[RMDB]
RNA sequence: GGGAACGACUCGAGUAGAGUCGAAAAUGGGCUACCUGUAAGCGAAAAAUGAUACAGGACGAAAAAAACAUAAUUCGAGAUUUUUCAGGAUGGAUUUUUUUAGGUAUCUAUCAAAACUAUUCUGAUGCAACGUAGAGCACGUUCGCGUGCUCUACAACACAUACUCAGCCUUCGGGCUGAGUAUGUGAAAAGAAACAACAACAACAAC
Reactivity to 2A3 in 0.01 (KOAc 150mM, MgCl2 10mM, bicine 150mM(pH8.5), 24C), signal-to-noise 2, nucleotides 027 to 156: u110g070g080g010c010u020a090c020c000u000g010u010a000a020g030c020g130a080a050a040a040a080u180g020a040u020a000c020a020g020g030a010c000g060a040a000a020a130a000a050a010c100a070u200a100a040u100u080c040g010a040g080a230u050u210u050u070u030c000a010g020g000a010u020g100g000a110u000u060u000u000u010u030u030a030g060g000u260a110u200c020u000a000u010c010a000a040a030a010c010u000a020u030u000c000u010g000a000u080g030c030a070a060c110g000u000a010g010a010g000c000a000c000g000u030u070c130g010c000g080u000g000c000u000c010u010a000c000a010a020